Structure probing data (2A3) for a 177-nucleotide construct. 2A3 adducts were read by reverse transcription with SuperScript II with manganese. Source: RMDB library OK1LIB, as collected in RNAgym. For 2A3, 578 sequencing reads were counted.

RNA sequence: GGGAACGACUCGAGUAGAGUCGAAAAUCAACGCCAGGAUGGGCAGUUACUUCACUGCACACGUGGCCAGCAGCGACCCCAGUGGACUGGUGCCGAUCGCGUUGGACGGCAAGAUGCUGCGUGGUGCCCCGUAGCGCAUAUUCGUAUGCGCUACGGGAAAAGAAACAACAACAACAAC
Reactivity to 2A3 in 0.01 (KOAc 150mM, MgCl2 10mM, bicine 150mM(pH8.5), 24C), signal-to-noise 2, nucleotides 027 to 126: u040c000a050a000c050g030c000c000a000g030g130a300u070g010g050g000c000a010g020u000u030a040c000u130u160c070a000c010u020g050c050a050c000a000c070g130u000g060g000c000c000a020g000c000a000g000c000g030a140c000c000c000c000a050g080u280g120g010a210c040u010g050g090u110g000c000c010g100a300u000c020g000c160g190u150u070g180g000a000c000g020g020c000a030a010g010a140u040g020c000u070g020c100g000u010g010g010u090g000c000